[RMDB]
RNA sequence: GGGAACGACUCGAGUAGAGUCGAAAAAAGUUGCACCAGGUACGGAUACCAGACGUUGCCAAACAGGGUGACAUGAGGAUCACCCAUGUACUGUCCCUUGGCAGCCGUACCUGGUGCUGGUCAAAAACUAUUUUAUCUCAUUCGUGAGAUAAAAUAGAAAAGAAACAACAACAACAAC
Reactivity to 2A3 in 0.01 (KOAc 150mM, MgCl2 10mM, bicine 150mM(pH8.5), 24C), signal-to-noise 6, nucleotides 027 to 126: a000a000g200u130u050g000c000a000c000c000a000g000g000u000a000c000g010g010a040u040a140c030c030a020g060a060c070g120u140u070g050c030c010a050a070a030c040a030g000g010g000u010g020a010c030a080u300g150a160g120g060a100u040c020a070c020c010c010a020u030g010u020a060c070u120g030u050c010c000c000u000u010g010g000c010a010g030c010c000g000u000a000c000c000u000g010g000u000g000c000u000g000g000u080c010a000a030a010a070a060
Reactivity to DMS in 0.01 (KOAc 150mM, MgCl2 10mM, bicine 150mM(pH8.5), 24C), signal-to-noise 9, nucleotides 027 to 126: a070a070g010u010u000g010c010a010c000c000a010g000g010u000a010c010g010g000a120u000a100c110c090a090g010a080c150g010u010u000g010c050c030a030a050a040c040a050g000g010g010u000g000a010c030a140u010g010a130g020g010a220u000c030a020c000c000c000a040u000g020u000a050c160u000g000u000c010c030c020u000u000g000g010c010a150g010c000c000g010u000a010c000c000u000g000g010u000g000c000u000g000g000u010c110a050a060a070a070a090